[RMDB]
RNA sequence: GGGAACGACUCGAGUAGAGUCGAAAAACACACCGUUUAUCCUAUUAUGUAAACACGAUAUCGACAACGUGGAAUUGUUUGAGAUAUGUUUAGAGAAUGCUAAUAUAGACUCUGUAGACUUUAAUGGAUAUACACCUCUUCAUUAUGUAUCAUGCCGAUCACAUAUGGUUUUCGAACCAUAUGUGAUAAAAGAAACAACAACAACAAC
Reactivity to 2A3 in 0.01 (KOAc 150mM, MgCl2 10mM, bicine 150mM(pH8.5), 24C), signal-to-noise 8, nucleotides 027 to 156: a000c070a010c010a050c040c070g020u040u060u020a080u050c020c010u030a070u240u040a150u260g120u120a070a080a020c050a020c070g060a070u030a030u110c070g070a060c040a060a030c030g060u070g070g090a110a100u080u100g050u070u060u140g060a040g000a030u040a020u070g070u020u100u090a040g010a010g030a150a050u100g030c010u050a090a070u100a110u020a130g050a070c010u000c010u020g060u060a050g040a060c000u060u070u100a050a030u110g010g020a010u030a010u040a080c040a050c010c020u080c030u120u070c070a100u040u180a080u200g050u010a030u040c020a020u050g040c010c020g040
Reactivity to DMS in 0.01 (KOAc 150mM, MgCl2 10mM, bicine 150mM(pH8.5), 24C), signal-to-noise 4, nucleotides 027 to 156: a070c070a090c050a090c040c040g010u000u000u000a070u010c040c020u000a070u000u010a080u010g020u000a080a060a130c020a040c030g000a090u000a110u000c020g010a040c030a020a040c030g020u010g020g020a130a090u000u000g010u000u000u010g020a120g010a130u000a030u010g010u000u010u010a030g010a130g020a120a070u010g020c060u010a070a100u000a140u000a090g020a070c020u000c020u020g000u000a090g010a110c050u000u000u000a050a100u000g020g000a100u000a090u000a050c040a060c070c040u010c070u000u000c050a080u000u000a040u000g020u000a060u000c040a080u000g000c020c010g010
This 207-nucleotide RNA was probed chemically with 2A3 and DMS. For 2A3, 4,519 sequencing reads were counted. The RNA was probed in 150 mM KOAc, 10 mM MgCl2 and 150 mM bicine (pH 8.5) at 24 C. The DMS profile rests on 9,125 reads. In probing experiments dimethyl sulfate is read out at A N1 and C N3, which are open when not base-paired. For DMS the reverse transcriptase was MarathonRT. Reactivities are given for positions 27 through 156. Values are in units of 0.01, from 0 to 300, in steps of 10.